[RMDB]
RNA sequence: GGGAACGACUCGAGUAGAGUCGAAAAUGCGGUAAUGCCCUCCUUUACACUUUCUCGCAUGGUGCGGGAGUGUGGAGAGGAAACAAAAGCUAGUCUCAGUUGGCAGUGUUCUACACACGGAAAGACUGACUUAAGUCUUGUUCGCAAGACUUAAGUCAAAAGAAACAACAACAACAAC
Reactivity to 2A3 in 0.01 (KOAc 150mM, MgCl2 10mM, bicine 150mM(pH8.5), 24C), signal-to-noise 1, nucleotides 027 to 126: u120g020c060g020g040u150a080a090u130g030c040c000c000u060c010c000u000u000u100a030c020a010c010u080u220u000c020u020c000g150c000a090u260g300g000u270g070c010g000g000g000a000g000u020g030u000g020g010a020g000a010g000g000a080a060a050c030a000a070a000a000g010c000u050a010g000u040c010u010c030a090g030u150u110g040g060c010a070g030u020g000u090u100c040u110a030c020a000c030a000c130g050g000a120a000a050g030a040c050u050
Reactivity to DMS in 0.01 (KOAc 150mM, MgCl2 10mM, bicine 150mM(pH8.5), 24C), signal-to-noise 2, nucleotides 027 to 126: u010g010c000g020g010u000a080a020u000g000c030c000c050u010c100c030u000u000u000a050c000a000c010u000u000u000c010u000c030g000c010a300u000g010g030u000g030c020g000g000g000a000g010u000g000u000g000g000a020g010a030g010g010a030a040a030c060a010a080a080a190g010c000u010a100g010u000c030u000c030a090g020u000u000g000g000c230a110g000u000g000u010u010c130u000a090c160a040c050a050c070g020g010a090a160a080g000a060c080u000

Conditions: 150 mM KOAc, 10 mM MgCl2 and 150 mM bicine (pH 8.5), 24 C. An RNA of 177 nucleotides, treated with 2A3 and DMS and read out base by base. High 2A3 reactivity points to a flexible backbone, as in loops and unpaired stretches. For 2A3, 1,120 sequencing reads were counted.